RNA sequence: GGGAACGACUCGAGUAGAGUCGAAAACACUUAAACGACAGAUUCGCAUUGCAUGCCGUAAGUGUAAUUUAGCUUUCCGGUUAACCACCUCAAAGCUACGCGCUAAUGAUAAUAUCUUAUCAGUUAGGAAGUGAUUGGUGUUCGCACCAAUCACUUCAAAAGAAACAACAACAACAAC
Reactivity to DMS in 0.01 (KOAc 150mM, MgCl2 10mM, bicine 150mM(pH8.5), 24C), signal-to-noise 1, nucleotides 027 to 126: c010a050c000u000u000a010a030a090c020g010a020c000a070g000a170u000u000c130g060c130a250u000u000g020c120a080u000g010c030c000g000u000a050a040g000u000g010u000a040a110u000u030u000a050g000c030u000u000u000c130c100g010g020u000u000a110a080c300c150a220c000c000u000c140a000a030a020g000c000u000a040c130g020c140g030c060u000a040a010u010g000a000u000a010a040u000a120u040c110u050u000a000u000c000a040g000u000u000a040g020
Reactivity to 2A3 in 0.01 (KOAc 150mM, MgCl2 10mM, bicine 150mM(pH8.5), 24C), signal-to-noise 1, nucleotides 027 to 126: c000a000c000u110u080a110a100a030c000g060a000c020a050g080a110u170u100c030g020c120a120u100u290g060c010a030u010g000c000c040g010u040a030a050g010u020g000u050a140a130u070u090u030a000g030c010u000u000u010c050c000g030g000u010u010a030a000c010c000a000c000c020u020c050a020a000a000g000c000u020a060c050g010c010g000c040u030a050a040u020g010a000u000a030a050u120a100u090c050u020u030a010u020c000a050g070u000u050a020g040